[RMDB]
This 207-nucleotide RNA was probed chemically with 2A3 and DMS.
The reactions ran in a buffer of 150 mM KOAc, 10 mM MgCl2 and 150 mM bicine (pH 8.5), at 24 C.
Source: RMDB library RNAMAK, as collected in RNAgym.
The 2A3 profile rests on 4,890 reads.
RNA sequence: GGGAACGACUCGAGUAGAGUCGAAAAUGUCAUGAUUCGUCAUGACAAAAAAAACCUUUGUGGAGGGUGUGUGGGAGCUCUAAGUGCCCAUUGGGCACGAUGAGCGAGGAUCACACACAUUCCACUCUGGUAAAAAAUCGUCGAUUCGUCGACGAAACUAGUAUGUAGGUUUCGACCUACAUACUAGAAAAGAAACAACAACAACAAC
Reactivity to 2A3 in 0.01 (KOAc 150mM, MgCl2 10mM, bicine 150mM(pH8.5), 24C), signal-to-noise 3, nucleotides 027 to 156: u070g000u010c000a000u010g010a020u060u160c250g060u000c090a000u020g000a000c000a020a000a000a010a000a000a020a030c000c000u030u000u000g010u000g000g010a000g020g030g000u010g000u000g000u000g000g010g000a010g000c000u000c010u030a100a060g020u010g020c010c010c050a150u140u300g000g010g000c000a000c000g000a030u080g010a010g000c000g000a040g000g010a000u010c000a000c000a000c000a000c000a010u020u000c000c000a000c000u010c000u000g000g000u070a080a120a020a010a030a040u040c000g010u000c000g000a010u030u060c230g070u010c000g090a000c000g000a040a000a000
Reactivity to DMS in 0.01 (KOAc 150mM, MgCl2 10mM, bicine 150mM(pH8.5), 24C), signal-to-noise 2, nucleotides 027 to 156: u000g000u000c000a040u000g000a070u030u000c300g030u000c010a000u000g000a020c000a000a000a010a090a050a060a080a020c000c020u000u000u000g030u010g000g010a030g000g000g060u000g050u030g010u000g030g000g000a200g000c000u020c000u010a150a290g020u000g000c010c010c010a300u000u000g040g020g000c020a020c030g000a120u010g000a020g020c000g000a060g040g010a070u020c010a020c000a020c010a020c020a050u000u000c000c000a010c000u000c030u010g010g000u000a000a050a070a050a120a120u000c010g000u000c010g020a090u000u000c230g010u000c030g010a030c010g000a020a040a060